[RMDB]
RNA sequence: GGGAACGACUCGAGUAGAGUCGAAAACGUUGUCAUCGACAACACCCUAUGCAUUCAUGCUCUGUAAGGAUGCGCCGAAAGGUGAUCAAGCCCGAGUUGCCCAGACCUGAAAUGCAACACUUUAGAGAAAACCCGAAGCAGUUCGCUGCUUCGGGAAGAGUGUAUUAUAGUUCGCUAUAAUACACUCAAAAGAAACAACAACAACAAC
Reactivity to DMS in 0.01 (KOAc 150mM, MgCl2 10mM, bicine 150mM(pH8.5), 24C), signal-to-noise 2, nucleotides 027 to 156: c090g000u000u000g010u010c000a120u010c070g010a130c010a060a040c010a130c020c020c000u000a140u000g000c020a050u000u000c070a140u000g020c060u000c050u000g020u010a130a110g020g020a050u000g010c080g030c070c030g040a100a090a120g010g030u000g020a150u000c040a090a140g020c030c000c040g020a120g000u000u000g000c000c040c050a200g000a060c020c010u000g010a080a070a100u010g020c010a100a100c020a130c050u000u000u010a100g000a220g030a090a090a070a140c000c000c000g040a010a000g030c010a060g020u000u000c300g060c000u000g020c000u000u010c010g010g000g010a010a010
Reactivity to 2A3 in 0.01 (KOAc 150mM, MgCl2 10mM, bicine 150mM(pH8.5), 24C), signal-to-noise 5, nucleotides 027 to 156: c070g000u000u000g020u020c110a250u100c300g030a010c000a020a000c000a060c000c000c010u060a100u070g000c010a000u000u040c010a020u060g000c050u020c020u050g100u080a050a050g070g030a050u060g040c000g010c030c000g070a170a060a030g000g000u030g040a110u110c080a050a050g020c000c010c020g070a070g060u090u160g060c010c010c020a000g000a030c020c010u010g020a050a060a030u040g010c010a070a020c030a040c070u140u150u170a120g030a010g030a100a090a030a020c000c000c000g000a000a000g000c000a000g020u060u170c200g040c140u000g000c000u000u000c010g010g000g000a000a000
This 207-nucleotide RNA was probed chemically with DMS and 2A3.
Values cover nucleotides 27 to 156.
Conditions: 150 mM KOAc, 10 mM MgCl2 and 150 mM bicine (pH 8.5), 24 C.
It was measured as part of the RMDB library M2RFPK.
2A3 adducts were read by reverse transcription with SuperScript II with manganese.
For DMS the reverse transcriptase was MarathonRT.
The 2A3 profile rests on 3,975 reads.